[RMDB]
RNA sequence: GGGAACGACUCGAGUAGAGUCGAAAAGAUAUGGAUAAGGUGGUAAGUUCGAAGAACUCGGAAACGAGGGAGAAUAUCCACUUAUCCUAAGUCAAAACACGAUCUAACCUUCGGGUUAGAUCGUGAAGCUGAUCUUUUACUUCGGUAAAAGAUCAGCAAAAGAAACAACAACAACAAC
Reactivity to DMS in 0.01 (KOAc 150mM, MgCl2 10mM, bicine 150mM(pH8.5), 24C), signal-to-noise 2, nucleotides 027 to 126: g000a040u000a300u010g000g020a020u000a000a030g000g010u020g000g010u010a090a250g010u000u000c020g000a120a200g010a150a200c000u000c000g030g000a130a030a140c010g000a000g000g000g000a070g010a000a010u000a300u000c000c000a020c010u000u000a010u010c020c000u000a020a080g000u020c010a040a080a140a230c000a000c000g000a010u000c000u000a000a010c010c000u010u000c130g050g000g000u010u010a000g000a010u000c000g020u000g010a030a020
Reactivity to 2A3 in 0.01 (KOAc 150mM, MgCl2 10mM, bicine 150mM(pH8.5), 24C), signal-to-noise 2, nucleotides 027 to 126: g000a030u050a010u080g010g000a010u020a040a120g300g090u050g000g040u190a300a300g090u130u000c080g100a300a060g010a120a010c000u000c000g000g050a030a030a040c010g000a020g000g010g000a040g010a000a020u040a080u100c000c020a000c000u000u000a000u000c000c010u010a160a020g030u030c040a000a030a080a090c000a010c010g010a000u020c010u010a000a010c020c010u040u130c300g010g000g000u000u020a000g000a000u000c000g000u010g000a000a000